[RMDB]
RNA sequence: GGGAACGACUCGAGUAGAGUCGAAAAGACAGAUUUGCCGCGCGGGUCGCCAUAUUUCUCCACCCAUUCGGAGGCGCGGCGCGGCCCGGCAUUAUACCCGGCGAAGGUGAGUACAUAGGAACCGUUACUGAUUUAAUAAUUUCGAUUAUUAAAUCAGAAAAGAAACAACAACAACAAC
Reactivity to DMS in 0.01 (KOAc 150mM, MgCl2 10mM, bicine 150mM(pH8.5), 24C), signal-to-noise 5, nucleotides 027 to 126: g020a130c100a110g000a160u000u000u010g020c020c010g020c120g030c020g020g030g050u000c020g020c020c040a100u010a130u000u010u010c040u000c010c020a110c100c080c100a200u010u010c110g010g010a080g010g010c160g020c150g000g020c060g030c030g000g010c030c030c010g010g000c040a040u000u000a090u010a130c100c050c000g010g020c050g010a050a060g000g020u000g000a070g010u010a060c060a060u010a080g010g000a130a070c040c040g000u010u010a150
Reactivity to 2A3 in 0.01 (KOAc 150mM, MgCl2 10mM, bicine 150mM(pH8.5), 24C), signal-to-noise 2, nucleotides 027 to 126: g040a030c030a000g150a140u060u090u100g000c010c010g000c010g050c020g030g100g020u060c010g000c010c000a050u130a050u180u150u040c010u020c010c010a070c040c050c030a130u210u120c100g050g000a030g010g000c040g030c010g090g040c010g000c000g020g000c000c000c000g050g020c000a000u090u050a030u180a080c000c020c020g010g030c040g010a040a000g070g020u030g050a040g010u040a020c030a080u120a040g110g020a050a060c010c000g020u000u010a070